[RMDB]
RNA sequence: GGGAACGACUCGAGUAGAGUCGAAAAUUCAUACAGCCUUUGGGGUGACGGGUGGCGCAAUGGGAUCAGGUGCCUCAAAGGGCAUCCCAUCUGAUCCCACAGCCUCACCCAUCACCCCAAAGGCCUAAAGUAUUGAGAAAUUCGUUUCUCAAUACUUAAAAGAAACAACAACAACAAC
Reactivity to DMS in 0.01 (KOAc 150mM, MgCl2 10mM, bicine 150mM(pH8.5), 24C), signal-to-noise 7, nucleotides 027 to 126: u010u010c030a100u020a110c300a220g000c000c000u000u000u000g010g000g010g000u000g000a010c080g010g010g030u000g000g000c300g000c000a060a140u000g010g000g000a010u000c000a020g000g010u010g000c000c000u000c190a060a120a140g000g000g000c070a040u000c100c170c100a110u030c040u010g000a000u000c000c010c000a030c270a110g000c000c000u000c000a000c000c000c000a030u000c010a010c000c000c000c010a000a010a000g000g010c000c010u000a040
This 177-nucleotide RNA was probed chemically with DMS. For DMS the reverse transcriptase was MarathonRT. The RNA was probed in 150 mM KOAc, 10 mM MgCl2 and 150 mM bicine (pH 8.5) at 24 C.